[RMDB]
Structure probing data (2A3) for a 177-nucleotide construct. For 2A3 the reverse transcriptase was SuperScript II with manganese. The data come from the RNA Mapping Database (RMDB), library OK1LIB.
RNA sequence: GGGAACGACUCGAGUAGAGUCGAAAACGAUUAUGAGGAAUACAAAGACAGGUAUAAUCCUUCUUCAUAUAUACACAAGUGCCUACGGUAUAAUAAGCACAUCAAUGACAAGAAUGCUGCCUAUAACGUUGUUCACCUGCUUCGGCAGGUGAACAACAAAAGAAACAACAACAACAAC
Reactivity to 2A3 in 0.01 (KOAc 150mM, MgCl2 10mM, bicine 150mM(pH8.5), 24C), signal-to-noise 1, nucleotides 027 to 126: c040g160a040u000u000a040u120g070a000g190g000a000a130u040a300c090a000a190a000g300a070c000a000g000g060u200a020u150a300a000u170c000c000u000u090c000u000u000c000a000u070a070u000a000u000a240c040a000c000a090a020g000u000g000c000c000u110a190c000g010g000u090a220u040a110a100u200a070a000g000c120a000c000a180u000c000a000a190u210g000a130c000a000a000g090a300a130u280g020c000u000g040c020c000u140a150u040a300a030c110
Background:
Reactivities are given for positions 27 through 126. Conditions: 150 mM KOAc, 10 mM MgCl2 and 150 mM bicine (pH 8.5), 24 C.